The record gives the reactivity of an RNA of 177 nucleotides to DMS and 2A3. The data come from the RNA Mapping Database (RMDB), library RFM100. The 2A3 profile rests on 2,112 reads. The DMS profile rests on 4,696 reads.
[RMDB]
RNA sequence: GGGAACGACUCGAGUAGAGUCGAAAAGCAAGAUUGAAACUUGAAGAAAUUGACGGAAGGACACCACCAGGAGUGGAGUGUGCGGCUUAAUUUGACUCAACGCGGGACAACUUACCAGGGCCAGUUGUCUGCUAAUAGACUUCGGUCUAUUAGCAGAAAAAGAAACAACAACAACAAC
Reactivity to DMS in 0.01 (KOAc 150mM, MgCl2 10mM, bicine 150mM(pH8.5), 24C), signal-to-noise 3, nucleotides 027 to 126: g010c050a040a040g010a110u050u020g000a110a080a110c030u000u000g000a110a060g040a070a040a110u010u020g000a090c110g000g000a100a120g000g010a080c080a080c080c030a050c030c030a060g010g010a190g040u010g010g010a110g010u020g000u010g020c040g000g000c060u040u000a020a100u030u010u020g000a050c050u000c030a060a060c060g020c050g000g010g010a050c050a060a060c090u000u010a100c010c030a100g000g000g000c060c040a080g010u010u010g000
Reactivity to 2A3 in 0.01 (KOAc 150mM, MgCl2 10mM, bicine 150mM(pH8.5), 24C), signal-to-noise 4, nucleotides 027 to 126: g060c020a020a020g020a070u130u160g040a100a050a020c040u050u040g020a060a040g080a090a190a090u180u180g040a030c040g030g030a070a010g040g000a030c000a040c030c000a020c000c010a050g090g020a080g040u070g000g010a030g010u140g010u050g050c040g020g000c020u060u050a070a020u110u070u090g020a000c000u000c020a000a020c040g000c040g060g010g000a010c000a010a010c050u020u050a050c030c020a010g010g000g000c000c020a060g010u020u020g030